[RMDB]
Structure probing data (2A3 and DMS) for a 207-nucleotide construct. The reactions ran in a buffer of 150 mM KOAc, 10 mM MgCl2 and 150 mM bicine (pH 8.5), at 24 C.

RNA sequence: GGGAACGACUCGAGUAGAGUCGAAAAUGGGAGCAACAAAGGGAUGGAACAUGGCUGUGUCUUAACAGGUUGGGCUGUAGGGUACACUAAGCUGGCUUGCCCACUCCAAGUUGAGAGUUGGGCCAUGGGAUUUGGGCGAAGGCUCAGGUCUCCUGGUACAGGAGUAAAUCUUCGGAUUUACUCCUGUAAAAGAAACAACAACAACAAC
Reactivity to 2A3 in 0.01 (KOAc 150mM, MgCl2 10mM, bicine 150mM(pH8.5), 24C), signal-to-noise 3, nucleotides 027 to 156: u120g010g000g000a060g040c070a020a060c030a070a130a080g040g000g020a020u050g040g030a060a020c050a080u130g040g000c030u040g000u020g010u080c030u070u120a080a060c040a040g040g040u050u060g100g000g000c010u030g040u070a060g020g030g040u070a010c030a010c040u070a040a040g030c040u030g060g020c040u040u090g010c000c000c000a010c010u020c010c010a110a100g040u090u120g090a090g000a010g070u140u070g000g000g000c000c000a030u020g000g020g010a010u020u000u000g000g010g000c020g070a100a040g170g000c010u000c010a000g000g000u010c000u000c010c010u020g020g010u020
Reactivity to DMS in 0.01 (KOAc 150mM, MgCl2 10mM, bicine 150mM(pH8.5), 24C), signal-to-noise 1, nucleotides 027 to 156: u010g010g030g000a070g030c060a090a060c060a040a120a090g000g000g010a100u000g020g010a110a100c070a060u000g030g050c000u000g050u000g030u000c070u000u000a050a080c070a070g040g030u010u000g020g000g130c010u010g060u000a080g020g000g040u000a090c040a040c080u010a050a080g020c000u000g000g030c030u000u000g030c000c020c030a030c020u010c030c000a050a190g030u010u000g030a130g020a080g010u000u000g000g010g000c010c040a000u020g040g000g000a030u000u000u010g010g020g010c030g050a110a100g000g010c030u000c000a030g020g020u000c010u000c020c010u000g030g020u000
Notes
The DMS profile rests on 2,972 reads.